RNA sequence: GGGAACGACUCGAGUAGAGUCGAAAAAAGGGAUGCCCAUGUCUUCUUCAUAAAGAAUAGAGGCCCACUCACUCAUGAAAGCUCUGCUCCAUGCUAGCACAAAUGAGGCGAUCUGUGUGGCGUACCGCUCGUUCUUCACCCAGUCUGAAUUUGACUGAUUAAGGCUUGCAUUCGUGCAAGCCUUAAUAAAAGAAACAACAACAACAAC
Reactivity to 2A3 in 0.01 (KOAc 150mM, MgCl2 10mM, bicine 150mM(pH8.5), 24C), signal-to-noise 2, nucleotides 027 to 156: a000a000g030g020g010a080u080g030c030c010c010a020u080g030u000c050u100u000c010u070u030c040a110u160a270a050a030g030a100a010u130a120g040a050g030g030c010c000c000a010c030u000c010a020c000u000c020a010u110g040a090a060a010g010c040u180c150u160g020c030u100c210c000a110u240g000c020u060a030g000c060a010c010a100a070a020u030g000a080g070g100c080g060a060u070c120u080g020u010g090u150g020g010c050g020u080a100c050c000g020c010u010c000g010u020u000c000u060u070c010a080c070c010c000a000g020u030c000u030g160a300a290u120u170u160g000a020c000u030g040
Reactivity to DMS in 0.01 (KOAc 150mM, MgCl2 10mM, bicine 150mM(pH8.5), 24C), signal-to-noise 1, nucleotides 027 to 156: a150a040g040g020g000a050u000g030c020c010c030a090u010g040u000c050u000u000c020u000u000c160a240u000a040a070a090g010a130a130u000a050g010a070g020g040c030c000c020a060c050u000c040a050c020u000c010a050u020g030a130a070a170g080c030u000c060u000g030c010u000c080c110a110u010g050c000u010a080g020c000a080c030a080a040a030u010g000a100g000g000c060g000a080u000c050u000g010u000g040u000g010g020c000g050u000a040c030c040g000c050u000c080g070u000u000c010u000u000c050a150c170c070c030a100g030u010c060u000g020a080a180u000u000u000g040a050c020u010g010